[RMDB]
RNA sequence: GGGAACGACUCGAGUAGAGUCGAAAAGGAACUAUGUUCAUGCAUGAAGCCUCCACGUGCUUGUUUCGACGUUCGUAGACGAAUGAGCAUAGUUAAGAGCUGAAGGAGGCACGGCUCAAAAUAAAAAGGUUGAUCAACUGUUCGCAGUUGAUCGACCAAAAGAAACAACAACAACAAC
Reactivity to DMS in 0.01 (KOAc 150mM, MgCl2 10mM, bicine 150mM(pH8.5), 24C), signal-to-noise 5, nucleotides 027 to 126: g000g010a020a010c000u000a000u010g000u010u000c020a000u010g020c030a010u000g000a100a100g000c010c000u000c000c010a300c010g010u000g010c010u020u030g010u010u000u010c020g020a140c120g020u020u020c180g040u040a060g000a050c020g020a070a010u000g010a010g000c000a010u020a000g000u010u000a060a090g010a010g000c000u000g000a070a090g000g020a020g000g000c000a280c030g000g000c000u000c010a120a090a080a090u040a020a090a080a100a090
Reactivity to 2A3 in 0.01 (KOAc 150mM, MgCl2 10mM, bicine 150mM(pH8.5), 24C), signal-to-noise 9, nucleotides 027 to 126: g100g000a000a000c000u000a000u000g000u000u010c000a010u030g000c000a000u010g030a080a020g010c000c000u000c000c000a020c010g010u000g000c010u170u170g130u100u150u090c060g050a080c070g070u050u270c060g050u110a020g010a030c010g020a050a010u000g000a000g000c000a000u000a000g000u000u020a070a020g000a000g000c000u010g030a110a030g030g000a000g000g000c020a010c000g000g000c000u000c000a080a100a010a010u230a030a060a020a010a000